[RMDB]
RNA sequence: GGGAACGACUCGAGUAGAGUCGAAAAACAACAUGCCCAGGUAGCCCAGACCUUCAAGGCUACGGUGCGUUGCGACGCACGGUCUGAUCCUUCACAACGACGUUCACCGCGUCUUCUUCCAUCCCCCUCCAGCGCACGAAGUUCGCUUCGUGCGCAAGAUAGGAGUUUACUUCGGUAAACUCCUAUCAAAAGAAACAACAACAACAAC
Reactivity to DMS in 0.01 (KOAc 150mM, MgCl2 10mM, bicine 150mM(pH8.5), 24C), signal-to-noise 1, nucleotides 027 to 156: a110c030a120a110c090a080u000g030c040c080c050a110g010g030u000a020g020c020c010c100a160g040a050c060c060u000u020c090a050a220g010g040c010u010a030c000g050g000u000g030c040g020u020u020g000c130g050a120c060g030c040a040c070g000g000u000c030u020g000a170u000c050c000u000u010c070a160c100a050a080c030g010a060c000g000u010u000c120a070c150c050g040c030g040u000c020u000u000c050u000u010c000c020a120u010c010c000c010c000c000u000c020c010a160g040c000g000c020a030c010g020a050a000g030u010u000c290g010c000u010u000c020g050u000g020c000g040c000a000a020
Reactivity to 2A3 in 0.01 (KOAc 150mM, MgCl2 10mM, bicine 150mM(pH8.5), 24C), signal-to-noise 2, nucleotides 027 to 156: a000c090a010a020c020a030u100g010c020c000c030a040g000g030u010a010g020c000c050c090a040g020a010c000c010u010u010c010a000a000g000g000c010u000a010c010g020g010u000g000c010g000u020u100g050c180g090a020c010g000c000a010c000g010g010u010c000u010g020a060u050c010c030u130u200c090a060c010a230a060c090g040a020c010g060u170u210c080a050c040c070g010c010g000u000c010u070u020c010u070u030c020c030a120u110c010c020c000c000c000u000c000c010a020g020c000g000c010a000c000g010a000a000g020u020u040c090g010c080u000u000c000g000u000g000c000g010c000a000a010